[RMDB]
RNA sequence: GGGAACGACUCGAGUAGAGUCGAAAAGAUAUGGAGACCUACCAAGCAACAGCCAGCGGAUCGGAAACGAUCCCUGGACAUGCUUGAUGGUCUCCUAAGUCAAAAGUUUCAAGUUCGCUUGAAACAACUAUUCACACAAGUUCGCUUGUGUGAAUAGAAAAGAAACAACAACAACAAC
Reactivity to 2A3 in 0.01 (KOAc 150mM, MgCl2 10mM, bicine 150mM(pH8.5), 24C), signal-to-noise 4, nucleotides 027 to 126: g000a010u030a010u060g010g000a010g000a000c000c010u040a090c290c030a000a010g010c050a070a140c050a240g050c010c000a030g010c180g100g000a000u000c010g000g030a020a030a010c000g000a000u010c000c010c000u010g000g020a000c010a110u250g000c000u010u000g000a010u010g010g000u000c000u000c000c000u000a010a000g000u000c020a010a020a040a170g000u010u000u000c010a000a020g010u020u170c300g090c160u000u010g010a010a010a010c000a000a000
Reactivity to DMS in 0.01 (KOAc 150mM, MgCl2 10mM, bicine 150mM(pH8.5), 24C), signal-to-noise 5, nucleotides 027 to 126: g010a030u010a280u000g000g010a030g010a010c010c000u000a120c190c030a010a010g000c010a100a070c300a160g000c000c000a000g020c300g030g010a010u000c000g020g000a040a050a140c000g020a000u000c000c000c000u000g000g000a010c040a190u010g030c000u000u000g000a100u000g000g000u000c000u000c000c000u000a000a030g000u010c020a120a090a130a140g000u000u000u000c000a010a010g010u000u000c290g020c010u000u000g000a010a010a010c010a140a170